[RMDB]
RNA sequence: GGGAACGACUCGAGUAGAGUCGAAAAGAGAUGGCGAGAGCCAUCGGUAGUAUAGCGAAAAUCAUAAAUGAGAAGAGCUCUAAACGCCUAAGUAGAGUUAAAAUAAUUAGACAGGCACUACUACCAACACGGCCUCGAACGUUCGCGUUCGAGGCAACCAGAAAAAGUAGUUCGCUACUUUUUCUGGAAAAGAAACAACAACAACAAC
Reactivity to 2A3 in 0.01 (KOAc 150mM, MgCl2 10mM, bicine 150mM(pH8.5), 24C), signal-to-noise 4, nucleotides 027 to 156: g110a000g000a000u000g000g000c010g010a050g010a000g080c000c000a000u000c010g010g000u010a000g000u010a020u060a030g060c100g050a080a080a060a030u100c060a080u140a260a150a120u200g020a080g060a220a070g030a020g010c000u020c000u000a020a030a010c060g010c010c000u050a160a010g010u000a010g020a010g050u240u250a020a020a020a000u200a030a030u210u020a010g010a010c020a010g030g000c000a000c010u010a010c000u000a010c010c000a040a030c090a030c100g080g000c010c000u000c010g000a000a000c000g010u070u080c190g000c010g080u010u000c000g000a000g000g000c000a000a000
Reactivity to DMS in 0.01 (KOAc 150mM, MgCl2 10mM, bicine 150mM(pH8.5), 24C), signal-to-noise 1, nucleotides 027 to 156: g030a120g080a000u000g000g060c080g010a300g030a300g000c000c000a000u020c000g010g010u010a060g000u030a030u000a050g010c050g000a000a040a130a050u010c020a070u020a070a120a110u020g000a140g040a130a140g010a220g030c030u000c020u000a040a080a180c070g000c050c010u000a070a120g050u010a020g010a070g050u000u000a070a070a100a130u010a080a140u000u000a070g000a120c040a080g000g010c030a160c050u000a030c000u020a100c050c010a080a170c080a070c100g000g000c040c000u010c000g010a020a020c000g020u000u010c220g010c030g030u000u000c010g000a040g080g010c020a010a000